[RMDB]
RNA sequence: GGGAACGACUCGAGUAGAGUCGAAAACACAAUUCUCUAAGCGAUGAGAAGCGUGUGGAACAUUAGGGAAGGGCUACGGCUAUAAUCCUAAGAAAGCUUAUCUACAAGCGGAGGUAUUCUCAGAACGAAAACCAUUUGGCGUUCGCGCCAAAUGGAACAAUUUUGAUAUGUUCGCAUAUCAAAAUUGAAAAGAAACAACAACAACAAC
Reactivity to DMS in 0.01 (KOAc 150mM, MgCl2 10mM, bicine 150mM(pH8.5), 24C), signal-to-noise 3, nucleotides 027 to 156: c030a080c040a080a220u000u010c000u000c000u000a160a150g030c120g020a250u000g010a020g010a020a040g010c230g030u010g020u000g020g030a070a120c060a120u000u000a070g010g010g010a120a150g020g000g020c020u000a080c220g050g000c030u000a050u000a080a120u000c030c010u000a060a100g000a110a060a190g000c040u010u000a120u010c060u000a100c090a000a060g000c030g020g030a100g030g000u000a070u000u030c030u000c040a140g000a060a090c090g000a110a080a070a170c000c000a030u000u000u000g020g040c030g020u000u000c300g010c000g040c000c010a000a000a000u000g020g000a060a060
Reactivity to 2A3 in 0.01 (KOAc 150mM, MgCl2 10mM, bicine 150mM(pH8.5), 24C), signal-to-noise 5, nucleotides 027 to 156: c040a010c010a010a060u050u010c010u000c020u100a190a160g100c080g120a120u130g010a060g000a040a010g030c050g020u020g010u060g020g040a090a040c030a120u040u060a040g010g020g050a040a070g110g040g000c020u040a020c130g040g000c010u030a030u040a220a060u100c000c010u030a020a010g070a060a050a000g010c010u070u050a040u130c050u060a080c060a100a040g020c030g040g030a020g040g010u060a090u120u030c040u010c020a070g060a110a030c070g050a060a060a030a060c000c000a000u000u000u000g000g000c010g030u040u030c220g000c000g000c050c000a000a000a000u000g000g000a000a000
The record gives the reactivity of an RNA of 207 nucleotides to DMS and 2A3. Conditions: 150 mM KOAc, 10 mM MgCl2 and 150 mM bicine (pH 8.5), 24 C. 2A3 adducts were read by reverse transcription with SuperScript II with manganese. For DMS the reverse transcriptase was MarathonRT.